[RMDB]
RNA sequence: GGGAACGACUCGAGUAGAGUCGAAAAUGUUUAUUAUUCUCAAGUCUUGUGUAAAUCAAUUCUUUUGGUUGACUCAAGUUUGGUUACUUCUGUUGGUGAUUCUAGUGAAAUCGCCACUAAAAUGUUUGACACAGUAUCUUCGGAUACUGUAAAAGAAACAACAACAACAAC
Reactivity to 2A3 in 0.01 (KOAc 150mM, MgCl2 10mM, bicine 150mM(pH8.5), 24C), signal-to-noise 6, nucleotides 027 to 129: u090g060u090u140u040a150u080u050a110u130u060c060u000c010a050a050g180u020c000u020u040g000u010g020u050a010a000a000u020c000a000a060u190u290c090u160u230u050u030g000g000u030u010g010a050c040u010c010a000a000g000u020u030u090g070g000u090u090a070c030u060u140c070u100g120u180u060g060g000u010g000a010u020u010c080u100a090g070u090g300a030a020a010u010c000g000c020c000a000c000u040a020a020a030a060u110g020u040u040u030g010a010c040
Reactivity to DMS in 0.01 (KOAc 150mM, MgCl2 10mM, bicine 150mM(pH8.5), 24C), signal-to-noise 4, nucleotides 027 to 129: u030g010u020u010u020a080u000u000a150u030u010c050u000c020a090a120g000u030c040u000u000g000u000g040u000a070a050a040u000c000a020a020u030u060c160u040u040u010u000g000g000u020u000g010a000c020u020c040a050a040g000u000u030u010g050g000u030u070a110c140u020u050c020u020g030u000u000g000g000u010g000a020u010u020c000u000a090g040u070g020a030a010a010u010c020g020c020c020a000c070u050a010a070a080a090u030g030u030u020u060g020a170c210